[RMDB]
Chemical mapping of a 177-nucleotide RNA with 2A3 and DMS. The reactions ran in a buffer of 150 mM KOAc, 10 mM MgCl2 and 150 mM bicine (pH 8.5), at 24 C.

RNA sequence: GGGAACGACUCGAGUAGAGUCGAAAAACUGGGUGGAUUAAGGUCAAGGUAUGAAGUCCUAUUCGCUCCUGAUAGGAACGACUUCAUAUUGCUUAUAUGUGUGCUGAUGCACACAUAUAAAUGCUCACAACCAACGUAGGUUCGCCUACGUUGGUUGAAAAGAAACAACAACAACAAC
Reactivity to 2A3 in 0.01 (KOAc 150mM, MgCl2 10mM, bicine 150mM(pH8.5), 24C), signal-to-noise 1, nucleotides 027 to 126: a000c040u030g010g020g010u030g000g020a070u090u110a100a030g000g030u000c060a080a010g030g000u030a010u050g010a030a010g020u000c000c040u040a040u010u070c050g040c110u000c030c030u100g070a060u050a030g010g020a050a010c060g060a020c070u010u010c000a010u020a010u060u120g010c020u030u010a000u000a000u000g010u000g000u000g000c030u100g180a090u300g000c000a000c020a000c000a020u000a010u000a010a000a000u100g020c010u020c010a090
Reactivity to DMS in 0.01 (KOAc 150mM, MgCl2 10mM, bicine 150mM(pH8.5), 24C), signal-to-noise 2, nucleotides 027 to 126: a140c100u010g000g000g030u000g010g010a110u000u000a080a100g020g030u000c100a080a090g010g000u000a010u000g000a020a010g010u000c010c080u000a080u010u000c100g000c070u000c020c010u000g010a100u020a080g020g000a060a040c110g000a080c020u000u000c000a010u010a040u000u000g000c080u000u000a010u000a000u010g020u000g010u000g010c000u010g010a170u010g030c000a010c000a000c010a000u000a010u000a000a040a110u010g020c030u000c110a170
Source: RMDB library RFMREP, as collected in RNAgym. For DMS the reverse transcriptase was MarathonRT.